[RMDB]
RNA sequence: GGGAACGACUCGAGUAGAGUCGAAAACCUGUAGUCCCAGCUACUCGGGAGGCUGAGGCUGGAGGAUCGCUUGAGCUCAGGAGUUCUGGGCUGCAGUGCGCUAUGCCGAUCGGGUGUCCGCACUAAGUUCGGCAUCAAUAUGGUGACCUCCCGGGAGGAUGUUUUACAGGUUCGCCUGUAAAACAUCAAAAGAAACAACAACAACAAC
Reactivity to DMS in 0.01 (KOAc 150mM, MgCl2 10mM, bicine 150mM(pH8.5), 24C), signal-to-noise 2, nucleotides 027 to 156: c000c000u020g020u000a070g010u000c010c000c010a120g030c050u000a080c030u010c020g000g010g000a120g010g010c030u000g000a060g010g020c000u010g010g020a100g030g010a100u000c060g040c030u010u010g010a060g000c010u000c010a080g020g020a240g010u000u000c020u020g010g000g010c020u000g010c040a070g030u000g030c000g030c070u000a080u000g020c000c000g010a080u000c080g000g000g000u000g010u000c160c190g030c040a070c010u000a110a130g030u000u000c000g000g010c010a060u000c070a040a140u010a130u010g010g020u010g010a150c030c020u000c010c000c010g020g000g020a180g010
Reactivity to 2A3 in 0.01 (KOAc 150mM, MgCl2 10mM, bicine 150mM(pH8.5), 24C), signal-to-noise 5, nucleotides 027 to 156: c000c000u030g180u120a030g060u060c020c010c000a020g020c020u090a090c010u030c010g000g010g000a010g010g000c060u090g070a010g080g000c010u030g020g050a080g020g060a110u120c040g000c030u060u080g080a000g010c000u000c010a030g020g060a300g130u300u140c010u000g000g010g000c000u030g040c000a010g040u020g040c030g000c040u050a020u040g010c010c010g030a040u030c070g060g010g000u010g010u020c040c120g070c040a010c020u070a250a090g020u010u030c010g010g000c010a000u000c020a020a070u130a120u290g140g000u090g080a100c010c000u000c000c000c000g000g000g000a040g050

An RNA of 207 nucleotides, treated with DMS and 2A3 and read out base by base. High 2A3 reactivity points to a flexible backbone, as in loops and unpaired stretches. It was measured as part of the RMDB library ARCHII. The reactions ran in a buffer of 150 mM KOAc, 10 mM MgCl2 and 150 mM bicine (pH 8.5), at 24 C. The 2A3 profile rests on 4,333 reads. Values cover nucleotides 27 to 156.